[RMDB]
RNA sequence: GGGAACGACUCGAGUAGAGUCGAAAAGAUAUGGAUAUUGUGAAGCACGAGGAUCUUAAUCGGAAACGAUUAAGGGAGUGCCACGGGUAUCCUAAGUCAAAGUACAACGGCUUCGGCCGUUGUACAACAAGAUCACAAAGUUCGCUUUGUGAUCUUGAAAAGAAACAACAACAACAAC
Reactivity to 2A3 in 0.01 (KOAc 150mM, MgCl2 10mM, bicine 150mM(pH8.5), 24C), signal-to-noise 4, nucleotides 027 to 126: g020a020u050a040u100g010g010a010u020a020u060u170g040u040g180a300a090g010c010a010c050g110a300g050g010a010u010c000u000u010a000a000u000c010g030g000a040a040a020c010g010a000u000u000a010a000g010g030g010a010g000u010g050c000c010a010c020g170g040g040u020a010u030c010c010u020a050a010g030u040c080a230a000a110g010u000a000c000a010a000c000g000g000c020u130u250c300g060g000c010c000g000u010u000g000u000a000c000a000a010
Reactivity to DMS in 0.01 (KOAc 150mM, MgCl2 10mM, bicine 150mM(pH8.5), 24C), signal-to-noise 5, nucleotides 027 to 126: g010a040u000a280u010g010g000a020u000a030u000u010g030u000g000a300a180g030c010a000c000g010a120g010g010a060u010c000u000u000a010a000u000c000g010g000a100a060a130c000g020a020u000u000a000a000g000g000g000a000g010u000g010c010c010a030c060g010g030g020u010a010u000c000c000u000a030a180g010u000c030a120a140a140g010u000a000c000a000a000c000g010g010c000u000u010c300g030g000c010c000g010u000u000g000u000a000c000a090a140